Record summary:
Structure probing data (2A3 and DMS) for a 177-nucleotide construct. It was measured as part of the RMDB library M2PK90. The reactions ran in a buffer of 150 mM KOAc, 10 mM MgCl2 and 150 mM bicine (pH 8.5), at 24 C. For 2A3 the reverse transcriptase was SuperScript II with manganese.
[RMDB]
RNA sequence: GGGAACGACUCGAGUAGAGUCGAAAAUUAAAGCGCGAAAAAGAUCGAUCGAUCGUAUGAACGCGCAAGUCGAAGUUUGAUACGGGCAUACUAGCUAGCUAGCUAGCAAAACAAACUUCGUAAAAAACUAUAAAUAUCAGUUCGCUGAUAUUUAUAGAAAAGAAACAACAACAACAAC
Reactivity to 2A3 in 0.01 (KOAc 150mM, MgCl2 10mM, bicine 150mM(pH8.5), 24C), signal-to-noise 2, nucleotides 027 to 126: u100u050a160a020a000g020c010g020c000g070a000a000a000a080a010g010a020u020c030g060a100u200c230g010a000u010c000g050u140a050u120g060a150a020c000g000c000g000c010a000a010g060u010c010g010a010a020g000u000u010u020g110a120u150a140c080g020g040g050c070a040u090a140c030u010a010g030c000u010a020g100c030u050a020g000c010u010a000g000c050a020a070a020a000c010a000a000a000c000u010u010c010g000u020a040a150a020a000a000a010
Reactivity to DMS in 0.01 (KOAc 150mM, MgCl2 10mM, bicine 150mM(pH8.5), 24C), signal-to-noise 4, nucleotides 027 to 126: u000u000a060a130a130g010c000g040c000g010a090a080a120a190a200g000a000u000c000g000a150u010c220g000a010u000c000g030u000a050u000g010a150a130c010g020c020g020c000a040a060g010u000c010g020a050a000g000u000u000u000g010a050u020a080c160g010g010g030c160a140u000a120c010u000a020g000c010u000a130g020c150u000a080g010c010u000a020g000c050a030a070a080a110c010a010a010a000c000u000u000c010g010u010a000a030a070a090a050a090